[RMDB]
RNA sequence: GGGAACGACUCGAGUAGAGUCGAAAAGAGCGUAUUCGUACGCUCAAAAAACCGUAGGUUACGUCUUGCUGCUAGCUCAUGGGUUCGAAAGAGCCCAAUGAGCUUGGACCAGCAAGAGCGUAACCUAAACGGAAAAAGUCGCAGUUCGCUGCGACAACCAAUCUUGUUUCUUCGGAAACAAGAUUGGAAAAGAAACAACAACAACAAC
Reactivity to 2A3 in 0.01 (KOAc 150mM, MgCl2 10mM, bicine 150mM(pH8.5), 24C), signal-to-noise 2, nucleotides 027 to 156: g000a000g000c010g000u010a000u150u240c240g050u060a040c010g020c000u000c000a000a000a000a000a000a110c010c000g000u010a010g000g000u000u000a000c000g000u020c010u000u000g000c000u000g030c010u030a000g000c000u000c000a000u000g000g010g010u030u000c010g060a110a090a090g000a020g010c000c000c030a050a110u010g000a010g010c000u040u010g020g010a040c110c010a000g000c000a000a000g000a010g000c000g000u000a000a000c000c000u000a000a010a000c010g000g080a120a100a000a010a000g000u000c000g000c010a000g030u090u130c170g100c100u000g000c000g000a000c000a000a000
Reactivity to DMS in 0.01 (KOAc 150mM, MgCl2 10mM, bicine 150mM(pH8.5), 24C), signal-to-noise 1, nucleotides 027 to 156: g000a000g000c000g010u000a010u000u010c300g100u010a040c010g010c030u010c000a000a040a090a100a030a100c000c030g000u000a050g000g020u000u000a000c000g050u000c010u000u000g010c010u000g000c010u000a020g010c010u030c000a080u000g010g000g000u000u030c020g010a190a160a300g000a030g010c000c000c000a010a030u010g010a010g020c000u000u030g010g010a070c230c000a020g030c000a000a000g000a070g000c050g040u010a010a040c000c000u000a000a010a020c020g010g000a000a030a070a180a170g010u000c030g010c000a050g010u000u010c280g060c000u000g040c030g030a030c020a000a050